Source information: Structure probing data (DMS and 2A3) for a 207-nucleotide construct. Conditions: 150 mM KOAc, 10 mM MgCl2 and 150 mM bicine (pH 8.5), 24 C. For DMS the reverse transcriptase was MarathonRT. 2A3 adducts were read by reverse transcription with SuperScript II with manganese. The 2A3 profile rests on 3,639 reads. Values cover nucleotides 27 to 156.

[RMDB]
RNA sequence: GGGAACGACUCGAGUAGAGUCGAAAAGUGGCUCACGCCUAUAAUCCUAGCCCUUUGAUAGGCCAAGGUGGGCAGGUCAUUUCGGCCUAGGAGCUCGAGACUAGCCUGGGCAACAAGGUGAAACCCCGUCUCUACAAAAAACACAAAAAUUAGCCGAAUUAUUUUAGUGAUUCGUCACUAAAAUAAUAAAAGAAACAACAACAACAAC
Reactivity to DMS in 0.01 (KOAc 150mM, MgCl2 10mM, bicine 150mM(pH8.5), 24C), signal-to-noise 2, nucleotides 027 to 156: g040u000g020g020c010u010c030a080c130g030c010c020u000a080u000a030a090u000c010c000u000a160g010c010c010c010u010u000u000g020a150u000a040g000g000c010c020a040a060g020g020u000g000g020g050c050a130g010g020u040c020a110u000u000u000c030g030g000c030c010u000a060g010g010a100g020c030u000c060g070a060g010a110c050u000a110g030c020c000u010g010g020g020c010a070a080c030a050a090g000g030u000g000a090a100a100c020c010c000c020g020u000c010u000c020u010a210c040a000a060a090a060a050a050c030a110c040a030a030a060a090a110u010u000a070g000c040c020g000a110
Reactivity to 2A3 in 0.01 (KOAc 150mM, MgCl2 10mM, bicine 150mM(pH8.5), 24C), signal-to-noise 4, nucleotides 027 to 156: g070u020g000g000c020u050c090a080c090g010c000c000u060a080u110a100a070u050c000c000u000a000g000c000c000c010u160u160u200g210a240u260a130g010g000c040c030a030a010g010g010u010g010g010g000c000a010g000g000u010c010a020u020u020u040c040g010g010c020c020u070a120g090g080a080g060c020u020c040g000a010g000a030c020u020a020g030c010c000u020g010g040g020c010a060a020c040a080a020g030g000u040g020a080a050a030c020c020c010c020g070u020c020u000c010u090a100c100a040a150a020a020a070a010c100a040c030a020a090a070a080a080u230u160a060g040c030c020g040a030